The data come from the RNA Mapping Database (RMDB), library M2RFPK. Chemical mapping of a 207-nucleotide RNA with DMS and 2A3.
[RMDB]
RNA sequence: GGGAACGACUCGAGUAGAGUCGAAAAAAUGCCGCCUCAGUUCCAAGCUCUUUCGUGGCACUGUAAACAGUCCUAUUGAGUUAGGGGCAGUCAACCACGUUGCGAAGCUAAAUUAUCUGGUCGAGACUUACGAUUCCCUACUUCGGUAGGGAAUCAACUUUAACACCACUUUCGAGUGGUGUUAAAGAAAAGAAACAACAACAACAAC
Reactivity to DMS in 0.01 (KOAc 150mM, MgCl2 10mM, bicine 150mM(pH8.5), 24C), signal-to-noise 2, nucleotides 027 to 156: a050a030u000g020c020c020g030c020c010u000c030a150g000u000u000c020c000a170a290g010c010u010c020u000u000u020c020g060u010g000g040c060a060c010u000g020u000a040a120a070c060a100g040u000c000c000u010a060u020u000g010a300g030u000u000a010g030g010g000g020c020a030g020u000c030a050a070c010c010a030c090g040u020u000g010c090g000a090a110g010c020u000a040a050a040u010u000a090u000c030u000g030g040u000c020g000a210g010a170c070u000u020a070c170g010a030u000u010c000c000c010u000a000c010u000u020c230g020g000u000a000g010g010g000a000a000u000c010a010a040
Reactivity to 2A3 in 0.01 (KOAc 150mM, MgCl2 10mM, bicine 150mM(pH8.5), 24C), signal-to-noise 3, nucleotides 027 to 156: a000a000u130g040c040c020g010c050c000u100c030a060g040u070u020c050c020a070a000g010c010u020c010u040u030u030c030g010u040g030g020c090a010c010u060g060u120a030a120a140c030a110g070u020c010c010u000a020u030u140g080a110g280u040u060a010g000g000g040g000c010a010g020u010c010a000a040c010c000a020c020g020u020u040g030c080g110a050a010g010c020u060a070a090a070u200u150a110u090c060u010g000g060u060c040g050a040g010a140c040u050u090a040c090g000a010u000u010c000c000c000u010a000c000u010u030c080g050g000u000a000g000g020g020a000a000u000c000a000a000
The DMS profile rests on 3,710 reads. Values cover nucleotides 27 to 156. For 2A3, 1,597 sequencing reads were counted. As a SHAPE reagent, 2A3 marks flexible, mostly unpaired nucleotides at the ribose 2'-OH. 2A3 adducts were read by reverse transcription with SuperScript II with manganese.